An RNA of 177 nucleotides, treated with DMS and read out base by base. DMS (dimethyl sulfate) methylates the pairing face of unpaired adenines and cytosines. Source: RMDB library TTRDEL, as collected in RNAgym. Values cover nucleotides 27 to 126. The DMS profile rests on 2,410 reads. The reactions ran in a buffer of 150 mM KOAc, 10 mM MgCl2 and 150 mM bicine (pH 8.5), at 24 C.
[RMDB]
RNA sequence: GGGAACGACUCGAGUAGAGUCGAAAAGAUAUGGAUCAGGUCUUGUUCGAAGAACUCGGAAACGAGGGAGAACAAGGACUAGUGAUCCUAAGUCAAACGGAUAUUAGCCUUCGGGCUAAUAUCCGAAGUAUGAACAAUCCUUCGGGAUUGUUCAUACAAAAGAAACAACAACAACAAC
Reactivity to DMS in 0.01 (KOAc 150mM, MgCl2 10mM, bicine 150mM(pH8.5), 24C), signal-to-noise 3, nucleotides 027 to 126: g010a040u020a300u020g000g000a020u010c000a080g020g010u000c000u000u010g000u000u000c020g030a100a130g000a110a170c010u010c000g000g020a120a070a240c010g010a000g020g010g000a090g000a010a000c010a010a020g010g020a020c010u000a090g010u000g020a000u000c010c000u000a020a080g000u000c020a060a120a300c010g010g000a010u000a000u000u000a000g000c000c000u000u020c200g010g000g000c000u010a000a000u000a010u020c000c010g010a010a020